[RMDB]
RNA sequence: GGGAACGACUCGAGUAGAGUCGAAAACGUCGAGGUUGCUGCCCAACUGAAGACUGCCAGCGUCAUCACUGAGAAGCCGCAGGACCCACGACCCUCGGCGAGCAAUCUUGCAGCAGGCUUGGGAAAGCCUUGAAGUCGAAUUCGUUCGACUUCAAGGAAAAGAAACAACAACAACAAC
Reactivity to DMS in 0.01 (KOAc 150mM, MgCl2 10mM, bicine 150mM(pH8.5), 24C), signal-to-noise 4, nucleotides 027 to 126: c080g030u020c030g020a090g010g010u000u000g020c040u010g000c030c060c040a080a130c130u000g010a060a050g000a040c040u000g000c020c030a070g020c050g020u000c090a080u010c070a090c070u010g000a120g000a130a120g020c040c060g020c100a050g020g000a120c030c020c070a080c110g000a130c090c020c010u000c030g010g000c030g000a080g020c060a060a080u010c030u010u010g000c050a080g000c070a060g020g000c040u000u000g010g010g000a120a080a130g010
Reactivity to 2A3 in 0.01 (KOAc 150mM, MgCl2 10mM, bicine 150mM(pH8.5), 24C), signal-to-noise 2, nucleotides 027 to 126: c040g050u030c000g020a010g030g100u080u100g060c050u080g010c020c010c010a000a050c050u040g040a040a010g060a040c010u020g030c020c020a060g000c040g080u080c010a090u050c010a020c090u070g030a040g040a260a030g000c010c030g000c050a020g000g060a120c020c000c030a040c060g100a090c010c000c000u040c010g020g000c010g030a030g010c030a020a110u060c030u050u110g040c030a030g010c010a020g070g010c000u060u050g030g000g000a080a080a020g000
Structure probing data (DMS and 2A3) for a 177-nucleotide construct. It was measured as part of the RMDB library OK2TRN. For DMS, 3,665 sequencing reads were counted. DMS adducts were read by reverse transcription with MarathonRT.